[RMDB]
Structure probing data (DMS) for a 177-nucleotide construct. For DMS the reverse transcriptase was MarathonRT. The reactions ran in a buffer of 150 mM KOAc, 10 mM MgCl2 and 150 mM bicine (pH 8.5), at 24 C.
RNA sequence: GGGAACGACUCGAGUAGAGUCGAAAAGUCGAGCGAAUGGAUGGGAGCUUGCUCCCUGAAGUUAGCGGCGGACGGGUGAGUAACACGUGGGCAACCUGCCUGUAAGACUGGGAUAACUUCGGGAAACCCCAAGGAAUCGGUUCGCCGAUUCCUUGGGAAAAGAAACAACAACAACAAC
Reactivity to DMS in 0.01 (KOAc 150mM, MgCl2 10mM, bicine 150mM(pH8.5), 24C), signal-to-noise 1, nucleotides 027 to 126: g000u000c010g010a300g050c030g000a030a010u000g040g000a120u010g000g000g060a010g010c030u010u000g010c040u000c010c000c000u010g000a300a140g000u000u000a110g030c010g010g000c100g000g000a030c050g000g000g010u000g010a070g050u000a050a080c140a110c140g020u000g010g000g030c030a180a120c120c090u010g050c030c010u000g010u000a040a050g050a080c050u000g010g020g020a190u000a100a070c120u010u010c080g000g010g000a160a050a080c150